[RMDB]
RNA sequence: GGGAACGACUCGAGUAGAGUCGAAAAGAAAUAGUGAAUAUAUUCAAGAUAAUUCUGUAUUUACAAAAUACCGUCUCAAUUCAUCCUAUUUCAUCAGAUCCGGUAUGUGAUAUGGUUCCGAAGGAUGGUACAGAUGUGAUUUCGAUCACAUCUGUACAAAAGAAACAACAACAACAAC
Reactivity to DMS in 0.01 (KOAc 150mM, MgCl2 10mM, bicine 150mM(pH8.5), 24C), signal-to-noise 2, nucleotides 027 to 126: g010a030a030a040u000a100g000u010g000a020a040u010a080u010a100u010u010c060a070a110g000a120u000a110a100u020u010c060u000g010u000a040u000u000u000a080c080a070a110a080a030u000a070c090c140g010u000c030u000c110a070a060u000u000c060a050u000c070c000u000a050u000u000u000c060a080u000c070a030g000a070u000c020c020g000g030u000a030u010g010u000g010a070u000a030u000g000g010u000u000c010c040g020a070a070g000g000a050u000g010
Reactivity to 2A3 in 0.01 (KOAc 150mM, MgCl2 10mM, bicine 150mM(pH8.5), 24C), signal-to-noise 2, nucleotides 027 to 126: g020a000a040a030u050a030g000u010g010a070a010u090a000u050a030u190u200c000a080a110g010a090u140a150a090u210u020c020u030g010u040a020u010u030u060a080c010a010a250a000a020u000a010c000c000g020u000c000u010c040a040a030u060u040c000a020u060c000c000u020a070u000u080u040c100a090u020c000a010g000a060u020c020c020g030g150u270a110u160g080u060g050a050u020a050u120g070g030u060u040c020c010g000a050a040g090g070a020u090g080